[RMDB]
RNA sequence: GGGAACGACUCGAGUAGAGUCGAAAAACAGGUAGCAGGUACGCCUGCUACCUGAACAUCAACUCUAACUUUAGCAUCUUUCUUUUAAGCAGAGCAGAAAGUGCUAUCAAGUUGGGGUAGAUGUUAAUUUGAUAUCCGCUUUCGAGCGGAUAUCAAAAAAAGAAACAACAACAACAAC
Reactivity to 2A3 in 0.01 (KOAc 150mM, MgCl2 10mM, bicine 150mM(pH8.5), 24C), signal-to-noise 2, nucleotides 027 to 126: a010c000a000g000g020u000a000g030c020a000g000g030u080a040c260g110c030c000u000g000c010u020a010c010c010u010g000a000a000c000a000u000c010a030a000c000u000c000u010a010a010c010u050u010u010a010g020c030a170u300c040u000u000u000c020u040u100u070u030a180a080g160c050a020g050a020g200c020a000g010a000a010a000g000u000g000c010u020a050u130c120a020a000g000u000u000g000g000g010g000u020a040g000a010u000g000u000u040a060a220
Reactivity to DMS in 0.01 (KOAc 150mM, MgCl2 10mM, bicine 150mM(pH8.5), 24C), signal-to-noise 1, nucleotides 027 to 126: a200c000a060g000g000u000a000g000c010a010g000g020u020a200c220g040c000c000u000g000c020u010a000c000c000u000g010a010a010c050a000u000c000a060a000c000u000c000u000a000a000c000u000u000u010a000g000c000a000u040c000u000u000u000c000u000u030u030u040a140a160g070c230a070g030a160g060c270a030g000a000a000a000g020u000g010c010u000a010u040c290a000a030g040u000u000g000g000g000g040u000a070g000a000u000g010u000u010a000a070
Structure probing data (2A3 and DMS) for a 177-nucleotide construct. The data come from the RNA Mapping Database (RMDB), library RFM100. High 2A3 reactivity points to a flexible backbone, as in loops and unpaired stretches.